RNA sequence: GGGAACGACUCGAGUAGAGUCGAAAACGUGCUCUCUUCGGAGAGCACGAAAGAAAGCACAAAGCACCAAAUAAAGGAGGUGCAGGGUGCAACCACCAAUUAAAAGAAGUAGGUUCGCCUACUUCAAGACCUAUAAACACUUCGGUGUUUAUAGGUCAAAAGAAACAACAACAACAAC
Reactivity to DMS in 0.01 (KOAc 150mM, MgCl2 10mM, bicine 150mM(pH8.5), 24C), signal-to-noise 2, nucleotides 027 to 126: c050g020u000g020c010u000c020u020c000u010u010c290g000g010a000g000a040g030c000a000c000g000a000a050a130g020a090a130a180g000c020a000c000a010a050a080g020c000a010c000c000a120a180a140u000a110a050a100g010g000a300g000g010u000g010c010a000g010g000g000u000g000c020a070a160c080c070a050c080c090a150a070u050u000a120a090a050a060g000a020a000g000u000a000g050g020u000u040c230g000c010c000u000a000c010u000u000c000a080a040
Reactivity to 2A3 in 0.01 (KOAc 150mM, MgCl2 10mM, bicine 150mM(pH8.5), 24C), signal-to-noise 1, nucleotides 027 to 126: c010g010u000g010c000u010c000u000c020u040u080c140g070g000a010g010a000g020c000a000c000g000a000a000a000g020a010a050a000g000c020a010c020a040a100a020g000c000a010c010c020a060a110a100u290a120a190a060g140g020a100g010g010u010g020c020a010g000g070g000u030g000c000a020a020c020c000a010c020c040a080a140u220u130a160a080a030a100g000a010a000g020u000a000g000g030u000u050c190g080c020c000u000a000c010u010u000c000a000a000
Chemical mapping of a 177-nucleotide RNA with DMS and 2A3. Source: RMDB library M2PK50, as collected in RNAgym. 2A3 adducts were read by reverse transcription with SuperScript II with manganese. Values cover nucleotides 27 to 126. The DMS profile rests on 1,118 reads. For DMS the reverse transcriptase was MarathonRT. Conditions: 150 mM KOAc, 10 mM MgCl2 and 150 mM bicine (pH 8.5), 24 C.